[RMDB]
An RNA of 177 nucleotides, treated with DMS and 2A3 and read out base by base.

RNA sequence: GGGAACGACUCGAGUAGAGUCGAAAACACUCGGAAAGUCGGGAAUGGUGGUGGUCGUGGUCUUCAUAGAGCUUGUUUAUUGAGUCGUGCUCCAAACGGUGGUUCCAUGGAGGAACGGUACGUGGUCUGAGGCUUAUAGAUUCGUCUAUAAGCCUCAAAAAGAAACAACAACAACAAC
Reactivity to DMS in 0.01 (KOAc 150mM, MgCl2 10mM, bicine 150mM(pH8.5), 24C), signal-to-noise 6, nucleotides 027 to 126: c090a120c050u000c050g000g000a070a080a070g020u010c040g010g000g010a090a070u000g000g020u000g010g020u000g010g010u010c040g010u010g010g010u000c030u000u000c060a090u000a090g000a080g020c040u000u000g010u000u010u000a110u010u000g000a030g010u000c020g000u000g000c040u000c010c070a060a070a070c070g010g020u000g000g000u000u000c010c010a110u010g010g000a190g000g010a020a030c030g030g000u000a080c040g010u000g010g010u010c150
Reactivity to 2A3 in 0.01 (KOAc 150mM, MgCl2 10mM, bicine 150mM(pH8.5), 24C), signal-to-noise 2, nucleotides 027 to 126: c000a010c000u010c000g050g030a130a060a030g050u050c020g030g000g070a060a060u050g050g010u010g020g030u010g010g020u020c030g010u030g000g020u000c000u030u000c030a040u010a040g060a000g010c050u010u030g010u100u100u070a120u030u140g010a010g000u020c000g010u010g020c050u040c030c000a040a030a000c020g000g020u050g040g020u040u000c010c000a020u090g120g050a090g010g020a000a010c000g000g010u060a000c020g010u010g010g020u030c050
DMS adducts were read by reverse transcription with MarathonRT. The data come from the RNA Mapping Database (RMDB), library OK2TRN. DMS (dimethyl sulfate) methylates the pairing face of unpaired adenines and cytosines. The RNA was probed in 150 mM KOAc, 10 mM MgCl2 and 150 mM bicine (pH 8.5) at 24 C. Reactivities are given for positions 27 through 126.